This 177-nucleotide RNA was probed chemically with DMS and 2A3. Source: RMDB library OK2TRN, as collected in RNAgym. The reactions ran in a buffer of 150 mM KOAc, 10 mM MgCl2 and 150 mM bicine (pH 8.5), at 24 C. DMS adducts were read by reverse transcription with MarathonRT. In probing experiments dimethyl sulfate is read out at A N1 and C N3, which are open when not base-paired.
[RMDB]
RNA sequence: GGGAACGACUCGAGUAGAGUCGAAAAGCACGGAGACAUGCACGGAAACGUGGACGGAGGCCCCAUGUCGAACGUGGCUGUCCGAGGCCUCCGUAUUUGACUGGUAAUUCAGUCGUUAGGACAGCUACACCUACGUGCACUUCGGUGCACGUAGGUGAAAAGAAACAACAACAACAAC
Reactivity to DMS in 0.01 (KOAc 150mM, MgCl2 10mM, bicine 150mM(pH8.5), 24C), signal-to-noise 1, nucleotides 027 to 126: g040c090a020c070g010g010a150g010a080c010a090u000g000c070a050c130g000g000a040a120a040c040g030u000g010g000a080c020g000g010a040g010g000c010c020c020c000a000u000g010u010c070g030a090a050c160g010u000g000g010c000u000g000u000c010c010g000a020g000g000c000c000u000c000c000g030u000a020u000u000u000g010a010c010u020g000g010u000a100a160u000u030c000a040g000u000c020g050u000u000a220g000g000a010c000a020g010c000u000a070
Reactivity to 2A3 in 0.01 (KOAc 150mM, MgCl2 10mM, bicine 150mM(pH8.5), 24C), signal-to-noise 1, nucleotides 027 to 126: g010c000a000c110g060g060a110g020a030c040a020u080g070c020a020c050g060g010a080a170a010c010g020u030g000g020a000c040g060g000a000g000g010c000c000c030c000a000u050g030u060c080g080a230a050c100g040u020g050g000c000u020g000u000c000c000g000a060g000g020c010c010u000c020c000g010u020a200u050u080u110g010a010c010u010g010g020u120a140a120u250u040c000a000g000u000c000g000u030u000a000g020g000a000c000a000g000c000u000a010